[RMDB]
RNA sequence: GGGAACGACUCGAGUAGAGUCGAAAAGCAAAAGAUUAUCCAGGUGUAGCGGUGAAAUUCGUAGAGAUCUGGUGGAUAAUGAACCGGUGGCGAAGGCGAAUGAUAACCGCUGAAAAGAAGAAUUGAAAGAAAGUCCAUUAUUCGUAAUGGACUUUCUAAAAGAAACAACAACAACAAC
Reactivity to DMS in 0.01 (KOAc 150mM, MgCl2 10mM, bicine 150mM(pH8.5), 24C), signal-to-noise 3, nucleotides 027 to 126: g000c100a080a040a120a130g010a090u000u010a040u030c010c040a060g020g010u010g030u010a040g020c000g010g010u000g000a100a130a090u000u000c020g020u000a130g000a150g000a140u000c000u020g000g010u000g000g000a150u000a070a060u010g020a150a050c030c000g000g000u000g000g010c300g000a120a150g000g000c000g010a010a030u000g010a140u000a300a050c020c010g020c010u000g000a010a050a050a100g000a060a040g010a090a070u000u010g020a100a120